[RMDB]
RNA sequence: GGGAACGACUCGAGUAGAGUCGAAAACGAAGCCCCUCUUCGGAGCACUGUGCAGCUAGGCCCCUUGGAGGGCGGCAACGCCCGGGCCUCUGAGGUCCUGGAGCUGUCCUGCGGGCCCAGCGCUCAGCCUUAUUACAAUGUUCGCAUUGUAAUAAGGAAAAGAAACAACAACAACAAC
Reactivity to DMS in 0.01 (KOAc 150mM, MgCl2 10mM, bicine 150mM(pH8.5), 24C), signal-to-noise 2, nucleotides 027 to 126: c090g000a150a110g010c080c010c020c030u010c030u010u010c070g030g010a070g020c140a300c040u010g020u010g010c000a100g020c010u000a080g010g010c010c020c000c200u010u010g010g020a050g000g000g010c010g000g000c050a060a110c180g020c060c000c030g010g020g020c000c010u010c110u010g010a040g020g010u000c000c000u020g020g010a130g000c010u000g010u010c000c010u000g010c110g030g000g000c010c010c010a010g020c020g020c020u000c030a070g000
Reactivity to 2A3 in 0.01 (KOAc 150mM, MgCl2 10mM, bicine 150mM(pH8.5), 24C), signal-to-noise 2, nucleotides 027 to 126: c040g060a050a010g070c020c000c040c000u060c020u030u060c100g110g030a030g050c080a020c060u010g000u020g000c090a130g010c100u000a000g000g000c010c010c000c050u030u060g120g080a030g020g010g000c010g020g020c010a060a110c130g140c030c020c090g000g020g000c090c010u080c150u270g130a120g000g000u010c000c010u010g000g000a020g010c010u010g010u000c000c000u100g120c040g010g000g020c000c010c000a000g000c000g020c000u030c000a020g020

Structure probing data (DMS and 2A3) for a 177-nucleotide construct.
2A3 is a SHAPE reagent: it acylates the 2'-hydroxyl of flexible nucleotides of all four kinds.
For DMS, 2,050 sequencing reads were counted.
Conditions: 150 mM KOAc, 10 mM MgCl2 and 150 mM bicine (pH 8.5), 24 C.